Chemical mapping of a 177-nucleotide RNA with DMS and 2A3.
The DMS profile rests on 2,520 reads.
Values are in units of 0.01, from 0 to 300, in steps of 10.
Reactivities are given for positions 27 through 126.
Conditions: 150 mM KOAc, 10 mM MgCl2 and 150 mM bicine (pH 8.5), 24 C.
For 2A3 the reverse transcriptase was SuperScript II with manganese.
[RMDB]
RNA sequence: GGGAACGACUCGAGUAGAGUCGAAAAUAUAACAGACAUGGAAUUCUACCAAGGUAAUAUUCUGCUGGCACUUGCAAAGAAGGGGGGGAGUGUUUGCAAAACCCAGGAUCAACACUUCACAUGAUUGCCAUAAUAAUUGCUUCGGCAAUUAUUAUGGAAAAGAAACAACAACAACAAC
Reactivity to DMS in 0.01 (KOAc 150mM, MgCl2 10mM, bicine 150mM(pH8.5), 24C), signal-to-noise 3, nucleotides 027 to 126: u010a060u000a090a120c090a060g010a070c070a060u000g010g000a160a070u010u010c060u010a100c070c050a070a090g020g000u010a050a070u000a060u000u010c050u010g010c060u030g000g020c040a060c070u010u000g010c060a040a060a080g000a110a080g010g020g000g000g010g000g010a030g010u000g000u000u010u000g020c080a050a070a060a100c090c020c040a070g010g010a080u010c040a030a070c050a040c020u000u010c080a090c120a050u020g000a110u000u000g010
Reactivity to 2A3 in 0.01 (KOAc 150mM, MgCl2 10mM, bicine 150mM(pH8.5), 24C), signal-to-noise 2, nucleotides 027 to 126: u120a000u010a110a000c030a010g100a010c030a040u070g030g070a040a070u140u000c040u070a070c040c050a040a060g100g030u050a150a020u050a140u170u000c020u030g050c020u020g010g000c020a030c060u070u040g000c020a050a000a160g090a070a090g020g020g000g000g040g000g010a000g040u020g000u060u000u070g000c000a020a020a020a020c020c020c000a010g070g000a020u040c030a000a040c030a040c050u070u090c100a100c000a100u130g030a130u140u160g090